[RMDB]
RNA sequence: GGGAACGACUCGAGUAGAGUCGAAAAGGAUUCCGGUCUCGACCGGUAGCCGUAUUGGGCGGGGACGGGCGGCGGUCCGGUGCUGAAGCCGGCGACAGUUGCCCGAGUCAGCCACUUUCAAAAUUUGGCUACAAUAUUCGUUCGCGAAUAUUGUAGCAAAAGAAACAACAACAACAAC
Reactivity to 2A3 in 0.01 (KOAc 150mM, MgCl2 10mM, bicine 150mM(pH8.5), 24C), signal-to-noise 4, nucleotides 027 to 126: g060g000a040u060u030c020c040g000g000u050c100u080c120g220a080c000c000g000g000u010a020g090c000c000g040u060a150u080u170g090g000g000c040g060g210g000g100a000c010g000g000g010c000g020g010c000g010g000u050c030c000g000g000u050g040c180u230g090a120a010g010c000c000g020g000c000g030a010c020a000g020u030u000g010c000c010c000g000a030g030u020c000a010g030c010c000a090c030u110u110u150c090a070a100a080a140u070u100u120g120
Reactivity to DMS in 0.01 (KOAc 150mM, MgCl2 10mM, bicine 150mM(pH8.5), 24C), signal-to-noise 2, nucleotides 027 to 126: g000g000a160u020u000c000c000g020g010u020c030u000c300g020a040c050c000g000g010u000a020g070c030c010g000u010a200u000u020g020g010g060c000g000g080g000g010a100c000g000g000g000c030g010g000c000g000g000u000c000c020g000g020u000g000c130u060g010a080a300g000c000c000g000g000c010g010a130c020a050g000u000u000g000c000c000c000g000a000g000u000c010a090g000c000c000a120c100u000u000u030c090a110a040a050a240u060u000u000g000